Chemical mapping of a 177-nucleotide RNA with 2A3 and DMS.
The RNA was probed in 150 mM KOAc, 10 mM MgCl2 and 150 mM bicine (pH 8.5) at 24 C.
The 2A3 profile rests on 1,238 reads.

RNA sequence: GGGAACGACUCGAGUAGAGUCGAAAAGCCGUAUCUCAACGGCUCAUCAGUGGGCUUAGCCCAGACUUAUGAGAGAGUGGUCACCUCUCAGCCCCUCCACCUUGGGGUGCCCUAUUCGAGGCACUGCCCUAUCGGAGUGGUUCGCCACUCCGAUAGGAAAAGAAACAACAACAACAAC
Reactivity to 2A3 in 0.01 (KOAc 150mM, MgCl2 10mM, bicine 150mM(pH8.5), 24C), signal-to-noise 1, nucleotides 027 to 126: g040c040c000g000u050a110u080c150u040c120a030a020c000g010g030c010u020c010a010u040c010a010g050u090g010g020g000c080u190u210a020g000c010c000c000a020g020a020c070u100u060a010u090g000a000g000a000g000a000g030u070g090g110u110c070a010c060c000u000c000u010c010a050g050c000c040c020c000u000c000c020a080c010c000u040u100g070g020g010g000u020g000c000c010c050u140a230u120u150c150g020a110g020g040c010a010c030u030g020c010
Reactivity to DMS in 0.01 (KOAc 150mM, MgCl2 10mM, bicine 150mM(pH8.5), 24C), signal-to-noise 1, nucleotides 027 to 126: g020c000c010g040u000a110u010c120u010c180a080a100c010g020g000c000u000c100a090u000c090a100g000u000g010g000g000c020u000u000a110g000c040c000c000a110g000a140c130u000u000a080u000g000a040g000a040g010a070g010u000g010g000u000c050a150c260c000u000c010u020c010a050g020c030c000c000c000u000c020c030a090c260c090u000u010g020g010g000g010u000g000c010c010c050u000a180u000u010c140g010a140g020g010c000a060c020u000g020c090